[RMDB]
RNA sequence: GGGAACGACUCGAGUAGAGUCGAAAAGAUAUGGACAAGCGGGAGUCGGUUUGGUAUGGACGAAUUAACUCGGAAACGAGUUAACUAUCCAUACCAAACGACGACGAAGAACGCUUGUCCUAAGUCAGAUUACUACAUUCUUCGGAAUGUAGUAAUCAAAAGAAACAACAACAACAAC
Reactivity to 2A3 in 0.01 (KOAc 150mM, MgCl2 10mM, bicine 150mM(pH8.5), 24C), signal-to-noise 1, nucleotides 027 to 126: g010a010u040a020u130g000g000a010c020a020a010g000c020g000g020g020a040g020u020c040g010g030u000u010u010g010g010u000a010u000g010g000a010c040g070a130a170u020u010a010a010c000u000c020g020g000a060a090a060c020g020a000g030u000u010a010a000c010u030a010u000c000c010a000u010a010c000c000a010a000a000c000g010a010c000g010a000c000g060a130a050g030a040a000c010g000c000u020u000g000u000c000c000u000a050a000g030u010c030a040
Reactivity to DMS in 0.01 (KOAc 150mM, MgCl2 10mM, bicine 150mM(pH8.5), 24C), signal-to-noise 7, nucleotides 027 to 126: g000a060u010a300u000g000g010a010c010a010a010g010c000g020g000g000a150g020u000c000g010g020u000u000u000g000g020u000a010u000g000g000a030c120g010a070a120u000u000a000a000c000u000c000g010g000a100a110a290c010g000a030g010u000u000a000a010c100u000a290u000c000c000a000u000a000c000c000a000a000a000c000g000a140c010g010a020c030g000a130a190g010a130a210c000g010c000u000u000g010u000c000c000u000a010a100g010u000c080a140